[RMDB]
RNA sequence: GGGAACGACUCGAGUAGAGUCGAAAAUGAGCUGUGCAAAGAAAGGGUUAAGAGUUCUUUGUGGGAGUGAUUCUUUGAAACCAUGAGUAACCAAGAACAUUUGUGGUGGGGAACAAAAACCUAAUUCACACAUCGCAGAAUUCGUUCUGCGAUGUGUAAAAGAAACAACAACAACAAC
Reactivity to DMS in 0.01 (KOAc 150mM, MgCl2 10mM, bicine 150mM(pH8.5), 24C), signal-to-noise 2, nucleotides 027 to 126: u000g000a140g010c050u030g000u000g010c090a040a050a030g010a020a060a070g010g000g030u010u000a070a090g010a250g020u000u000c010u000u000u000g020u010g010g000g010a180g020u000g000a120u000u000c020u000u010u020g030a080a130a010c030c060a060u010g010a170g000u000a040a150c080c080a030a080g000a030a010c070a040u000u000u000g000u000g000g000u000g000g000g010g000a090a040c130a090a020a090a070a080c110c080u020a070a130u010u000c120
Reactivity to 2A3 in 0.01 (KOAc 150mM, MgCl2 10mM, bicine 150mM(pH8.5), 24C), signal-to-noise 1, nucleotides 027 to 126: u110g000a010g050c030u020g050u070g100c020a030a020a030g070a050a070a000g120g000g000u200u170a090a040g060a000g060u080u000c000u000u000u060g050u060g000g040g000a040g010u020g010a160u000u000c070u050u050u090g070a040a030a000c010c010a090u160g010a000g120u040a000a020c000c000a020a050g030a030a000c030a100u080u060u120g060u040g000g080u090g030g010g020g050a080a070c100a040a120a030a000a010c030c000u060a110a080u150u120c020
Description: An RNA of 177 nucleotides, treated with DMS and 2A3 and read out base by base. For 2A3 the reverse transcriptase was SuperScript II with manganese. Reactivities are given for positions 27 through 126. The RNA was probed in 150 mM KOAc, 10 mM MgCl2 and 150 mM bicine (pH 8.5) at 24 C.